[RMDB]
RNA sequence: GGGAACGACUCGAGUAGAGUCGAAAAAAUCAUGAACGAGGAAUUCCUAGUAAACGCAAGUCAUCAUCUUGCAUUGAUUACGUCCCUGCCCUUUGUACACACCGCCCGUCGCACCUACCGAUUGGAUCUUAUCCUCUUUCUUCGGAAAGAGGAUAAGAAAAGAAACAACAACAACAAC
Reactivity to DMS in 0.01 (KOAc 150mM, MgCl2 10mM, bicine 150mM(pH8.5), 24C), signal-to-noise 2, nucleotides 027 to 126: a020a050u000c040a040u020g040a070a100c110g000a050g010g020a190a100u000u010c020c000u000a090g030u030a060a070a100c240g000c020a040a020g030u010c140a110u010c200a110u000c020u000u000g000c040a110u000u020g020a050u000u000a040c060g040u010c020c000c020u000g010c020c010c040u000u010u000g020u000a050c130a130c140a040c040c050g000c010c020c010g000u000c020g000c100a060c030c010u010a050c080c050g020a170u000u010g000g000a080u000
Reactivity to 2A3 in 0.01 (KOAc 150mM, MgCl2 10mM, bicine 150mM(pH8.5), 24C), signal-to-noise 1, nucleotides 027 to 126: a000a000u110c040a050u230g030a050a030c050g000a090g090g020a040a100u150u110c000c020u000a070g040u090a000a110a030c070g000c000a000a020g080u060c060a170u030c020a000u000c100u010u040g000c000a020u000u080g130a110u000u150a040c050g030u050c000c000c020u030g020c000c000c000u060u060u080g140u120a040c000a000c000a040c030c010g080c000c040c000g050u000c000g010c040a080c000c010u070a080c000c020g070a080u060u140g040g010a030u010